[RMDB]
RNA sequence: GGGAACGACUCGAGUAGAGUCGAAAAUUUUACCUAAUUUGUUGUCCAUCAUGUAAAAUUUAAGUGAUGAUAGACGCCAAUUUGGGUAGAGGAAAAACGCACAGUGAAUGUUCGCAUUCACUGUGCGCCUAUUAGUAGGCUUCGGCCUACUAAUAGGAAAAGAAACAACAACAACAAC
Reactivity to DMS in 0.01 (KOAc 150mM, MgCl2 10mM, bicine 150mM(pH8.5), 24C), signal-to-noise 2, nucleotides 027 to 126: u000u010u010u000a000c000c000u010a010a000u000u010u000g010u000u010g010u000c000c020a020u000c000a000u000g030u000a080a080a130a120u010u010u010a110a180g000u000g010a020u010g000a060u000a040g000a020c000g000c190c010a010a010u000u000u000g000g000g020u000a010g000a020g010g010a030a060a050a120a240c020g010c010a000c000a010g020u000g000a020a010u000g000u000u010c230g020c010a020u000u000c000a000c000u000g010u000g000c000g000
Reactivity to 2A3 in 0.01 (KOAc 150mM, MgCl2 10mM, bicine 150mM(pH8.5), 24C), signal-to-noise 4, nucleotides 027 to 126: u010u010u000u000a000c000c000u010a020a010u020u010u010g010u010u090g010u020c020c010a000u010c010a010u070g050u300a070a190a260a300u210u300u180a170a060g050u020g040a000u000g000a010u040a110g010a000c000g000c000c000a010a000u000u040u040g010g000g000u000a020g020a020g010g090a120a110a000a010a040c010g000c000a000c000a000g020u010g000a000a000u010g020u050u060c170g020c120a010u010u000c010a000c000u000g000u000g000c000g000